[RMDB]
RNA sequence: GGGAACGACUCGAGUAGAGUCGAAAAGACGGGCGCGCAGUGGCGGAUUCAGGUGAGCAACGGCGGAACGUCGGUCGUCGACACCUAUGUCAUGGCCUGUCCGGUCUCGGGCGGCCAAUGCGUAUGGUCUGAGAAACUGCUUCGGCAGUUUCUCAGAAAAAGAAACAACAACAACAAC
Reactivity to DMS in 0.01 (KOAc 150mM, MgCl2 10mM, bicine 150mM(pH8.5), 24C), signal-to-noise 1, nucleotides 027 to 126: g010a030c020g060g020g010c060g040c100g010c020a090g010u000g010g010c000g010g000a120u000u000c170a040g020g040u000g030a170g000c060a030a070c090g010g010c010g000g000a090a060c130g030u000c000g040g060u000c000g030u000c050g020a130c110a080c030c010u000a050u010g010u000c050a090u000g010g010c000c000u020g010u000c000c000g000g030u010c300u020c010g000g010g000c010g000g000c000c010a010a000u010g000c050g010u000a020u030g040g000

Annotation: This 177-nucleotide RNA was probed chemically with DMS. For DMS, 1,024 sequencing reads were counted. Reactivities are given for positions 27 through 126.